This 177-nucleotide RNA was probed chemically with DMS and 2A3. 2A3 adducts were read by reverse transcription with SuperScript II with manganese. For 2A3, 1,223 sequencing reads were counted.
RNA sequence: GGGAACGACUCGAGUAGAGUCGAAAAUGUGGCUCAGCAGGUCACUCCGAAUGACCAUGCUAAUGCCAGAGCUUUUUCGCAUCUGGCUAGUAAACUGAUCGAACAUGAGAUCCCCACCUCAGUUACGGAUUCCUCUAGCCUUCGGGCUAGAGGAAUCAAAAGAAACAACAACAACAAC
Reactivity to DMS in 0.01 (KOAc 150mM, MgCl2 10mM, bicine 150mM(pH8.5), 24C), signal-to-noise 1, nucleotides 027 to 126: u000g000u000g000g000c000u040c060a090g000c100a110g000g000u000c000a000c030u000c000c290g000a220a030u000g000a000c000c000a300u000g110c000u000a000a180u030g000c000c000a010g000a000g140c000u000u240u000u000u080c140g000c000a300u000c000u000g000g000c000u010a010g010u030a000a300a220c000u000g000a180u000c180g000a000a040c070a000u010g000a240g000a000u000c000c000c000c150a000c010c030u000c000a030g000u010u000a300c200g000
Reactivity to 2A3 in 0.01 (KOAc 150mM, MgCl2 10mM, bicine 150mM(pH8.5), 24C), signal-to-noise 2, nucleotides 027 to 126: u030g020u020g050g000c060u000c030a030g000c030a060g020g000u000c000a010c080u060c020c030g010a020a060u060g020a010c000c040a060u030g000c010u060a050a000u100g000c000c000a000g000a000g000c000u210u200u150u110u120c060g070c020a300u030c020u000g000g000c030u000a000g000u010a000a110a050c000u030g000a030u100c040g070a030a040c010a070u040g020a010g000a030u000c000c010c000c070a020c010c020u030c060a080g010u030u100a030c050g070